RNA sequence: GGGAACGACUCGAGUAGAGUCGAAAACGGACGGGAUUUUAGCCGGGUUGCAAGUUUACCCAUUUCGUGCUGGGUCCUGGACCCAGUUAAGAUUAUAGAAAUAUUAUCGAUUUCUUUACCGUCCGGAAAAUUAGGAUGAGUUCGCUCAUCCUAAUUUAAAAGAAACAACAACAACAAC
Reactivity to DMS in 0.01 (KOAc 150mM, MgCl2 10mM, bicine 150mM(pH8.5), 24C), signal-to-noise 4, nucleotides 027 to 126: c010g010g000a010c010g010g000g000a030u000u000u000u000a020g000c010c040g010g000g010u000u000g020c040a040a030g010u000u020u010a050c000c000c010a070u000u010u020c200g030u000g020c300u000g010g010g000u000c270c060u010g000g010a000c000c000c010a030g010u000u000a010a030g000a010u000u000a140u000a050g000a030a020a020u010a040u010u010a130u010c100g000a050u000u000u000c000u000u000u010a230c000c000g010u000c000c000g010g000a050
Reactivity to 2A3 in 0.01 (KOAc 150mM, MgCl2 10mM, bicine 150mM(pH8.5), 24C), signal-to-noise 2, nucleotides 027 to 126: c010g030g000a000c020g000g020g020a020u000u020u030u070a020g020c020c010g000g060g010u000u140g200c040a040a030g030u140u260u150a030c000c000c000a020u120u130u140c140g040u140g120c070u000g010g010g010u040c020c030u020g040g000a010c000c000c000a000g010u010u000a000a000g010a010u060u100a050u090a150g010a020a080a010u090a050u300u230a210u130c030g000a030u030u030u020c020u050u030u000a090c030c000g000u020c000c040g000g000a000

An RNA of 177 nucleotides, treated with DMS and 2A3 and read out base by base. The DMS profile rests on 5,830 reads. The reactions ran in a buffer of 150 mM KOAc, 10 mM MgCl2 and 150 mM bicine (pH 8.5), at 24 C. The 2A3 profile rests on 1,195 reads. In probing experiments dimethyl sulfate is read out at A N1 and C N3, which are open when not base-paired. DMS adducts were read by reverse transcription with MarathonRT.